Notes
Chemical mapping of a 177-nucleotide RNA with 2A3 and DMS. It was measured as part of the RMDB library TTRDES. The reactions ran in a buffer of 150 mM KOAc, 10 mM MgCl2 and 150 mM bicine (pH 8.5), at 24 C. DMS adducts were read by reverse transcription with MarathonRT.
[RMDB]
RNA sequence: GGGAACGACUCGAGUAGAGUCGAAAAGAUAUGGAUGUAUCCAUGACGAGCUUGGCGAUCGGAAACGAUCGCGAAGCGAUGAGUCAUGGAGUACAUCCUAAGUCAAAGUACCCCUUCGGGGGUACAACUCAUAGCAUACGUUCGCGUAUGCUAUGAGAAAAGAAACAACAACAACAAC
Reactivity to 2A3 in 0.01 (KOAc 150mM, MgCl2 10mM, bicine 150mM(pH8.5), 24C), signal-to-noise 3, nucleotides 027 to 126: g050a020u090a050u230g010g000a000u000g010u020a030u050c000c000a000u000g010a010c030g040a020g040c010u020u050g290g010c020g010a000u000c010g030g040a080a090a070c010g000a010u000c020g010c000g000a000a000g040c000g060a250u170g080a030g000u010c000a010u020g000g020a020g010u000a000c000a000u000c000c000u000a130a020g000u000c030a060a090a140g000u000a000c000c000c020c080u010u160c300g090g000g000g070g000u010a010c010a000a000
Reactivity to DMS in 0.01 (KOAc 150mM, MgCl2 10mM, bicine 150mM(pH8.5), 24C), signal-to-noise 4, nucleotides 027 to 126: g020a060u000a300u000g000g000a000u000g010u000a050u000c000c000a000u000g020a010c000g000a150g010c000u000u000g000g030c000g020a000u000c000g000g010a150a140a180c000g020a010u010c000g010c000g000a000a000g010c000g000a060u010g000a300g000u000c010a020u000g000g000a030g020u000a000c010a000u000c000c000u000a020a100g000u000c040a100a140a210g000u010a010c000c000c000c000u000u010c210g030g010g000g020g000u000a000c000a060a120